An RNA of 177 nucleotides, treated with 2A3 and read out base by base. Conditions: 150 mM KOAc, 10 mM MgCl2 and 150 mM bicine (pH 8.5), 24 C.

[RMDB]
RNA sequence: GGGAACGACUCGAGUAGAGUCGAAAACAAAAACAAAACGAGGCUAAGCACGUGCAAAGAUUGCUCAGCAAAGCACGUGCAAAAGCACUCGAUGCUGAGCAGUCCAAGAAAAAGGACACAACAAAAAGCGUGUUGUUCUGUUCGCAGAACAACACGCAAAAGAAACAACAACAACAAC
Reactivity to 2A3 in 0.01 (KOAc 150mM, MgCl2 10mM, bicine 150mM(pH8.5), 24C), signal-to-noise 1, nucleotides 027 to 126: c010a030a160a020a000a010c130a170a120a000a010c000g000a000g030g020c020u110a030a100g000c000a000c000g000u000g040c000a000a290a000g090a150u100u090g000c000u010c110a010g000c030a010a010a010g020c000a010c000g000u000g000c080a000a000a000a000g030c000a100c050u010c050g000a000u060g110c000u000g000a040g000c040a040g020u000c030c000a050a040g080a300a170a000a000a000g020g000a040c040a000c110a230a050c110a000a100a000a070a070